Chemical mapping of a 177-nucleotide RNA with 2A3 and DMS.
Conditions: 150 mM KOAc, 10 mM MgCl2 and 150 mM bicine (pH 8.5), 24 C.
Source: RMDB library OK1LIB, as collected in RNAgym.
For 2A3 the reverse transcriptase was SuperScript II with manganese.

RNA sequence: GGGAACGACUCGAGUAGAGUCGAAAAUAUCAGUAGAGAGAUCUGUCUGGUAGAACUCAGUCCUUAGUUAUGAGCGGACGCCUCAGUGGUCAGGUUCGCAAAUACUAAAACUCGCCGCGGGGUAAGGCUUUGCCCUCUGGUUCGCCAGAGGGCAAAGAAAAGAAACAACAACAACAAC
Reactivity to 2A3 in 0.01 (KOAc 150mM, MgCl2 10mM, bicine 150mM(pH8.5), 24C), signal-to-noise 2, nucleotides 027 to 126: u040a010u010c000a000g020u020a000g040a000g000a010g050a100u000c000u020g260u000c000u020g020g000u040a060g080a060a030c000u040c100a010g150u070c010c000u030u020a040g040u060u120a060u060g050a030g000c020g030g030a000c030g000c000c000u060c190a160g070u200g070g070u040c140a070g200g000u000u010c010g020c000a070a000a020u060a030c000u030a000a000a120a050c020u080c080g030c030c010g000c040g010g050g000g000u110a140a100g000g000
Reactivity to DMS in 0.01 (KOAc 150mM, MgCl2 10mM, bicine 150mM(pH8.5), 24C), signal-to-noise 1, nucleotides 027 to 126: u020a040u000c050a000g050u010a010g000a010g000a290g000a140u000c010u000g000u000c000u000g000g000u000a000g000a150a070c150u070c050a120g070u030c050c040u000u000a050g000u000u000a040u000g000a180g030c000g000g000a000c010g010c000c000u010c250a040g020u040g030g000u000c300a050g040g020u000u000c030g000c000a030a140a010u020a020c030u000a020a060a080a120c000u000c190g000c030c050g000c160g000g010g000g040u040a030a110g020g000